[RMDB]
Chemical mapping of a 177-nucleotide RNA with 2A3 and DMS.
The RNA was probed in 150 mM KOAc, 10 mM MgCl2 and 150 mM bicine (pH 8.5) at 24 C.
It was measured as part of the RMDB library RFMREP.
Reactivities are given for positions 27 through 126.
For 2A3 the reverse transcriptase was SuperScript II with manganese.

RNA sequence: GGGAACGACUCGAGUAGAGUCGAAAACACCUAAUGGCAGAGCACAAGAAACAAUUAAUGUCAAUCUGCGCGCAUAAGCAGAACUUGUGACUAAUUGAAGUAUUAAGAAGUAGGGAGCAUGUGAGCACGUAGUUGAUAGGUUCGCCUAUCAACUACGAAAAGAAACAACAACAACAAC
Reactivity to 2A3 in 0.01 (KOAc 150mM, MgCl2 10mM, bicine 150mM(pH8.5), 24C), signal-to-noise 3, nucleotides 027 to 126: c060a010c010c010u060a090a050u050g030g000c010a000g030a050g090c020a040c020a080a010g060a070a080a010c030a020a030u120u150a060a150u170g030u020c010a040a060u000c010u010g010c030g020c060g010c060a140u050a300a030g000c010a000g010a020a070c040u160u170g090u060g100a040c010u010a040a000u010u030g010a040a000g030u050a050u110u070a110a080g050a050a010g030u040a030g010g000g020a010g030c020a030u060g040u030g060a040g020c020a030
Reactivity to DMS in 0.01 (KOAc 150mM, MgCl2 10mM, bicine 150mM(pH8.5), 24C), signal-to-noise 4, nucleotides 027 to 126: c190a170c070c030u000a050a060u000g000g010c030a060g000a100g020c040a050c090a060a030g000a140a210a170c030a020a010u000u010a030a110u010g030u000c020a050a130u000c000u000g000c000g010c300g000c190a100u020a060a160g000c000a010g010a030a180c200u000u000g010u010g020a040c010u000a060a030u000u010g000a050a070g000u000a060u000u010a080a120g010a050a050g030u000a010g000g000g010a060g010c030a030u000g020u010g010a110g000c050a100